Structure probing data (2A3) for a 177-nucleotide construct. For 2A3, 1,439 sequencing reads were counted.

[RMDB]
RNA sequence: GGGAACGACUCGAGUAGAGUCGAAAAGAUAUGGAAUGCUUGGAGCGAUAAGCAUUUAUCGGAAACGAUAGGGUGCUUUUGACGCUUAAGCAUUCCUAAGUCAAAGGGAACAGUUCGCUGUUCCCAACCGCUACAAUGCGUUCGCGCAUUGUAGCGGAAAAGAAACAACAACAACAAC
Reactivity to 2A3 in 0.01 (KOAc 150mM, MgCl2 10mM, bicine 150mM(pH8.5), 24C), signal-to-noise 1, nucleotides 027 to 126: g010a030u010a000u050g000g000a000a000u020g000c030u040u050g220g000a000g000c040g160a300u020a300a000g000c000a000u070u000u010a010u000c000g030g030a000a000a020c030g000a000u000a000g230g120g040u070g000c060u130u100u160u300g300a250c100g010c030u010u000a000a000g010c000a010u030u010c010c000u000a010a010g000u010c010a100a170a050g000g000g000a010a000c010a020g000u110u130c230g130c260u030g000u000u020c000c010c010a010a010